[RMDB]
RNA sequence: GGGAACGACUCGAGUAGAGUCGAAAACAAUUGUAGACCGAUAUCCACAUAUGUUGACAGCAAGUAUCAUUAUUACGCAAUUAGAAGAGAUUGGUAUUACAAGUGACUUAAAAGUUGCGAUUGAGUCGUUUAUUAAGGCCACCAAAUCAUGCAAUUGUACCACGCUAUUGUUCGCAAUAGCGUGGUAAAAAGAAACAACAACAACAAC
Reactivity to DMS in 0.01 (KOAc 150mM, MgCl2 10mM, bicine 150mM(pH8.5), 24C), signal-to-noise 2, nucleotides 027 to 156: c020a070a250u000u020g040u000a030g010a000c030c020g010a050u020a120u000c030c000a030c020a080u000a110u000g030u010u010g010a160c050a190g060c080a140a060g010u000a070u000c070a090u000u000a080u010u000a160c080g060c050a090a140u000u000a080g030a090a180g030a060g030a080u000u000g000g020u000a050u000u020a020c050a060a070g050u000g010a070c030u000u000a050a030a070a190g010u000u000g030c000g000a210u020u000g010a130g050u000c020g030u000u000u000a100u010u000a050a050g030g050c010c020a010c060c020a040a070a080u000c070a090u010g000c050a030a180u000u010g000
Reactivity to 2A3 in 0.01 (KOAc 150mM, MgCl2 10mM, bicine 150mM(pH8.5), 24C), signal-to-noise 2, nucleotides 027 to 156: c030a030a040u050u030g020u050a000g020a070c000c030g040a050u060a040u160c080c010a050c010a060u100a000u140g150u050u110g080a050c030a020g050c060a110a080g040u060a100u180c020a160u030u210a080u080u120a080c080g020c020a010a070u090u020a130g050a170a000g060a020g020a030u000u030g010g000u090a090u050u090a020c010a030a060g000u000g030a000c000u100u110a030a020a020a050g060u080u080g010c020g050a010u010u070g000a000g060u000c020g000u000u040u000a120u040u080a070a000g040g040c010c000a030c020c030a000a020a080u070c120a050u100g020c030a000a060u020u050g000